About this RNA
Structure probing data (2A3 and DMS) for a 177-nucleotide construct.

[RMDB]
RNA sequence: GGGAACGACUCGAGUAGAGUCGAAAAUCAGGACCAUUGCGGUUGUGCAAAACGGUGUUAUUGCUGAGAAGGGAACGCAUGAGAGGUUGGUAAAGACCUCAAUGGAAUCUUAUGGUACUCUUUUUGCAUUUAGCGCAUUUUUCGAAAUGCGCUAAAUAAAAGAAACAACAACAACAAC
Reactivity to 2A3 in 0.01 (KOAc 150mM, MgCl2 10mM, bicine 150mM(pH8.5), 24C), signal-to-noise 3, nucleotides 027 to 126: u070c000a010g020g060a010c000c000a020u000u050g010c030g010g000u040u060g040u080g070c020a040a070a000a030c050g000g000u010g040u030u070a160u150u120g030c010u040g010a030g020a140a000g070g000g000a060a000c020g000c050a010u050g000a040g000a020g150g040u020u070g020g150u210a110a040a010g020a040c000c000u000c030a000a010u030g000g040a060a070u050c020u040u110a070u150g050g030u070a070c000u030c020u020u010u000u080u170g070c010
Reactivity to DMS in 0.01 (KOAc 150mM, MgCl2 10mM, bicine 150mM(pH8.5), 24C), signal-to-noise 5, nucleotides 027 to 126: u000c100a060g010g020a120c030c020a130u010u000g010c200g020g010u000u000g010u010g000c070a020a040a070a090c130g000g020u010g000u020u010a050u010u010g010c020u010g010a080g000a070a060g000g000g020a070a080c120g000c050a030u000g000a110g010a020g020g000u010u000g010g020u030a070a070a130g000a040c010c010u010c040a070a030u000g010g010a070a080u010c050u000u000a020u020g010g010u000a050c040u000c020u000u000u010u000u020g010c150

Conditions: 150 mM KOAc, 10 mM MgCl2 and 150 mM bicine (pH 8.5), 24 C. It was measured as part of the RMDB libraries RFM100 and RFMREP. For DMS the reverse transcriptase was MarathonRT.